[RMDB]
RNA sequence: GGGAACGACUCGAGUAGAGUCGAAAACGCCGGCGCGUCCGAAGUGAUCUUCCCGCAUAUCGUCGGCGCGGCCCUGUUCGAAGCCCUGGCCGAGACCACGACCUGGGAUGUCAUCGUCGACCACACCUGGGAUGCUUGAAUUCGUUCAAGCAUCCCAAAAAGAAACAACAACAACAAC
Reactivity to DMS in 0.01 (KOAc 150mM, MgCl2 10mM, bicine 150mM(pH8.5), 24C), signal-to-noise 1, nucleotides 027 to 126: c040g000c040c060g050g010c040g030c120g000u000c140c030g010a030a150g000u020g000a040u000c060u000u010c010c040c010g030c210a170u000a080u000c060g060u000c020g010g000c010g030c100g010g050c000c000c020u000g000u010u000c060g020a130a150g010c030c010c020u010g020g030c010c030g010a060g000a070c120c130a060c010g000a040c050c030u020g030g000g010a070u000g010u000c110a060u020c120g020u010c040g020a040c010c070a080c080a110c110c050